Structure probing data (DMS and 2A3) for a 177-nucleotide construct. The DMS profile rests on 2,070 reads. The RNA was probed in 150 mM KOAc, 10 mM MgCl2 and 150 mM bicine (pH 8.5) at 24 C.
[RMDB]
RNA sequence: GGGAACGACUCGAGUAGAGUCGAAAAAUCAAUUCUGGUGCAUGGCAGAUUGGUCUUGCUAAUUUUGUGGGAAUUAUUGAUAACCAUUACCCAAAAACAAAGAUCUUCCAGUUCUUAAAAUUGACUAGGAUGUAUCUAUCUUCGGAUAGAUACAUCCAAAAGAAACAACAACAACAAC
Reactivity to DMS in 0.01 (KOAc 150mM, MgCl2 10mM, bicine 150mM(pH8.5), 24C), signal-to-noise 2, nucleotides 027 to 126: a090u010c010a070a040u000u000c020u010g010g020u010g060c050a060u020g010g000c050a080g000a080u000u000g000g020u020c120u000u100g070c190u040a100a090u010u000u030u000g040u010g000g000g000a060a100u000u070a140u030u030g000a120u010a160a150c150c050a020u000u000a150c010c000c000a030a000a000a020a030c040a040a010a040g030a030u000c000u000u030c000c000a080g000u000u000c000u000u000a070a050a040a020u050u020g000a080c130u020a230
Reactivity to 2A3 in 0.01 (KOAc 150mM, MgCl2 10mM, bicine 150mM(pH8.5), 24C), signal-to-noise 5, nucleotides 027 to 126: a000u040c030a010a020u100u010c020u060g010g010u050g000c100a170u060g050g000c040a020g030a120u090u100g060g020u020c040u040u040g020c030u120a110a190u030u090u080u060g160u170g020g000g050a030a060u120u060a080u100u240g120a150u120a160a070c070c020a030u040u180a170c000c010c020a000a070a010a000a000c100a020a080a010g010a000u000c000u030u020c010c000a030g000u050u010c020u050u110a080a120a120a130u080u070g030a050c050u030a070